[RMDB]
The record gives the reactivity of an RNA of 177 nucleotides to 2A3 and DMS.
Reactivities are given for positions 27 through 126.
The RNA was probed in 150 mM KOAc, 10 mM MgCl2 and 150 mM bicine (pH 8.5) at 24 C.
RNA sequence: GGGAACGACUCGAGUAGAGUCGAAAAGCAGCGACUUCAGGCCCAGCGGCUGCUGCUGCAAGGACAAAGCGAAAGCGGGGUGCUGGAGCGCGAUAUCGAGGAACUGUUCAGCAACGUGCCCCAGGCCAGGCAUACAUGCUUUCGAGCAUGUAUGCCUAAAAGAAACAACAACAACAAC
Reactivity to 2A3 in 0.01 (KOAc 150mM, MgCl2 10mM, bicine 150mM(pH8.5), 24C), signal-to-noise 1, nucleotides 027 to 126: g100c100a020g070c000g150a300c140u050u030c020a020g050g000c010c000c010a010g030c000g030g000c020u050g000c010u030g150c070u030g040c060a110a130g190g000a060c000a080a210a000g000c010g070a070a020a000g000c010g000g040g040g000u190g100c010u000g000g020a030g000c010g000c010g000a020u020a040u090c060g020a010g000g090a090a110c020u070g050u060u030c010a020g040c030a060a050c020g040u050g010c000c000c000c000a010g000g020c010c050
Reactivity to DMS in 0.01 (KOAc 150mM, MgCl2 10mM, bicine 150mM(pH8.5), 24C), signal-to-noise 2, nucleotides 027 to 126: g050c030a100g080c000g000a120c050u010u000c030a050g020g000c000c050c020a100g030c050g010g010c180u000g010c020u000g000c100u010g020c170a140a080g000g000a220c060a050a120a020g000c000g000a030a170a150g000c010g020g000g010g030u010g030c000u000g020g000a020g010c030g020c010g010a090u010a050u010c040g010a140g000g000a090a100c070u020g000u000u010c040a070g000c050a050a080c050g000u000g000c020c000c040c050a020g000g020c050c060